[RMDB]
RNA sequence: GGGAACGACUCGAGUAGAGUCGAAAAUACCGGUUGCCACUGUCUCUAAUGAGUCAAGCGCUUCAAGUAAUACAGUUAAACCAGUUGCAAGUGCAUGGAAACGUAAUAAAUAUGGUACUUACUACAUCACUAAUAUCGACUUCGGUCGAUAUUAGUGAAAAGAAACAACAACAACAAC
Reactivity to 2A3 in 0.01 (KOAc 150mM, MgCl2 10mM, bicine 150mM(pH8.5), 24C), signal-to-noise 4, nucleotides 027 to 126: u130a020c000c000g000g020u090u210g020c010c010a050c010u050g020u080c000u000c020u070a180a140u210g010a000g040u010c020a050a010g000c040g000c070u030u020c040a040a130g040u070a070a070u070a110c040a030g020u040u040a160a130a000c020c000a030g040u080u010g050c080a160a170g030u050g050c000a030u040g010g070a050a020a030c040g030u110a020a060u100a110a180a050u230a110u060g100g020u060a040c020u110u000a020c000u050a030c000a080u030
Reactivity to DMS in 0.01 (KOAc 150mM, MgCl2 10mM, bicine 150mM(pH8.5), 24C), signal-to-noise 2, nucleotides 027 to 126: u010a120c060c060g020g040u000u000g000c010c040a140c170u000g000u000c030u000c020u020a100a110u020g010a090g000u020c020a030a080g010c120g010c010u000u060c060a050a070g040u020a060a050u020a080c050a020g010u070u000a110a140a090c040c020a020g000u000u010g010c080a100a070g000u000g030c090a090u000g000g010a060a120a040c030g010u000a010a030u000a080a040a070u000a060u030g000g010u010a040c030u000u010a060c090u000a030c120a060u030
Structure probing data (2A3 and DMS) for a 177-nucleotide construct. Conditions: 150 mM KOAc, 10 mM MgCl2 and 150 mM bicine (pH 8.5), 24 C. In probing experiments dimethyl sulfate is read out at A N1 and C N3, which are open when not base-paired.